Conditions: 150 mM KOAc, 10 mM MgCl2 and 150 mM bicine (pH 8.5), 24 C. An RNA of 177 nucleotides, treated with DMS and read out base by base. It was measured as part of the RMDB library M2PK50. For DMS the reverse transcriptase was MarathonRT.

[RMDB]
RNA sequence: GGGAACGACUCGAGUAGAGUCGAAAAUCGGGAUCCUUCGGGAUCCCGAAAAUAGCGCGUUCGGGCGGGCGGGUACGCGCACCCGCCGGCCCGAAAAAGAAAAAACAUCGGUCUUCGGACCGAUGAAUCCAGUAUUACUGUUCGCAGUAAUACUGGAAAAAGAAACAACAACAACAAC
Reactivity to DMS in 0.01 (KOAc 150mM, MgCl2 10mM, bicine 150mM(pH8.5), 24C), signal-to-noise 1, nucleotides 027 to 126: u000c000g020g030g020a010u000c000c000u000u020c180g020g020g000a000u000c000c000c010g010a000a010a040a060u000a090g030c080g010c120g030u010u000c000g000g030g020c020g030g000g020c000g010g000g020u010a090c230g020c170g040c130a180c000c020c020g040c000c000g010g010c000c000c000g000a010a010a030a090a080g020a000a050a040a080a050a120c000a000u000c000g000g010u000c000u000u010c170g000g000a010c000c000g000a000u000g000a040a070